[RMDB]
RNA sequence: GGGAACGACUCGAGUAGAGUCGAAAAGAGAAGUUUGACACCAAAUUCAAAUUGGUGUUAGGGGAGCUGGGGCCUUUCAAAAGAGAGCUUUGUAGAGGCAUUCUUUUUGACUACUUUUCUCUAGCGUGCCAUUUUAGUUUUUGACGGCAGAUUCGAACCUACUGGUUCGGUUCGCCGAACCAGUAGGAAAAGAAACAACAACAACAAC
Reactivity to 2A3 in 0.01 (KOAc 150mM, MgCl2 10mM, bicine 150mM(pH8.5), 24C), signal-to-noise 1, nucleotides 027 to 156: g070a000g020a150a000g030u030u280u130g010a000c000a000c030c010a000a020a080u300u140c060a050a110a210u030u000g000g020u000g000u000u000a000g000g030g000g000a000g000c070u030g000g000g130g050c020c040u050u140u060c030a010a040a090a000g100a000g000a000g070c060u100u130u150g100u140a010g000a040g000g060c030a070u070u050c000u000u050u020u020u160g000a030c040u210a180c000u150u090u090u160c000u000c000u000a000g050c030g070u010g000c010c000a000u010u040u170u140a000g010u030u000u030u000u190g120a080c110g000g030c040a030g050a170u080u080c000g000a040a000

The data come from the RNA Mapping Database (RMDB), library PDB130. Chemical mapping of a 207-nucleotide RNA with 2A3. Values cover nucleotides 27 to 156.